[RMDB]
RNA sequence: GGGAACGACUCGAGUAGAGUCGAAAAGCAAGAGCUGACAACAACUGGGGCGGUUUAACAUGGACUGGUUCAGGUAAUCGCCCGUCUGGUAUUAAAGUUACGCAAGGUACUGCUAGACCUGCCAAUGAGGGCGGUUAUUACAUGCAUUUCGCAAGCGGGAGAAAUAGACAUUCGUGUCUAUUUCUCCAAAAGAAACAACAACAACAAC
Reactivity to 2A3 in 0.01 (KOAc 150mM, MgCl2 10mM, bicine 150mM(pH8.5), 24C), signal-to-noise 3, nucleotides 027 to 156: g010c050a050a060g020a020g070c020u080g040a040c030a090a010c020a030a040c100u040g010g010g010g020c050g010g020u000u030u060a040a030c060a080u090g020g040a030c020u050g210g000u100u120c020a010g000g030u000a000a000u000c000g010c000c000c000g030u010c010u020g000g000u030a060u090u190a180a100a030g030u050u070a040c060g010c060a070a040g100g000u110a150c050u020g020c000u020a020g020a030c000c010u030g030c010c020a060a080u160g020a070g000g020g000c010g010g000u020u000a000u000u050a010c010a020u100g050c000a040u030u150u150c070g000c070a050a030g050c090g050
Reactivity to DMS in 0.01 (KOAc 150mM, MgCl2 10mM, bicine 150mM(pH8.5), 24C), signal-to-noise 2, nucleotides 027 to 156: g030c030a080a130g000a120g000c050u000g010a090c060a100a110c030a060a080c040u010g030g010g010g010c000g040g000u010u010u000a050a110c070a090u000g010g000a120c040u010g010g010u000u000c030a070g000g010u010a030a020u000c000g030c010c000c000g000u010c050u000g020g030u000a110u000u000a050a150a090g000u010u010a040c090g020c060a130a110g020g030u010a040c110u000g020c020u000a150g000a050c060c040u000g000c020c040a080a140u000g000a170g020g000g000c010g020g010u000u000a020u000u000a050c060a080u020g010c020a300u000u000u000c050g000c060a020a100g010c140g030